[RMDB]
RNA sequence: GGGAACGACUCGAGUAGAGUCGAAAAAUACCUCCUGGUGAACAAUUUCGUCACCUUAAAAAGGACAUGCGCCAAGCACGUCCUUGGAAGGUUGUACGUAAUGAGAUAGCUGCACAUCUGGCAGAUGGCCAUAUGAUCUGUUCGCAGAUCAUAUGGCAAAAGAAACAACAACAACAAC
Reactivity to 2A3 in 0.01 (KOAc 150mM, MgCl2 10mM, bicine 150mM(pH8.5), 24C), signal-to-noise 2, nucleotides 027 to 126: a000u160a080c010c000u060c020c010u080g020g020u090g070a070a040c060a190a150u050u060u060c020g030u010c000a030c020c000u010u060a130a110a000a000a010g000g010a000c020a050u030g000c050g040c160c110a110a010g000c000a000c020g010u030c020c000u000u000g000g040a020a010g050g020u090u090g010u050a000c050g010u060a080a000u100g030a060g040a080u070a140g050c020u030g030c050a060c010a300u090c090u120g060g000c030a030g000a120u110g160
Reactivity to DMS in 0.01 (KOAc 150mM, MgCl2 10mM, bicine 150mM(pH8.5), 24C), signal-to-noise 2, nucleotides 027 to 126: a140u010a100c070c020u000c040c060u020g020g000u010g000a080a160c100a140a060u000u000u000c040g020u010c000a020c000c000u000u000a020a030a070a020a010g000g000a020c000a050u010g000c030g000c180c300a090a200g020c000a010c020g010u000c000c000u000u010g000g010a070a010g000g010u000u000g030u020a030c010g010u000a040a020u000g000a170g000a140u010a140g020c010u000g000c050a090c090a070u020c080u010g000g010c050a090g010a060u010g020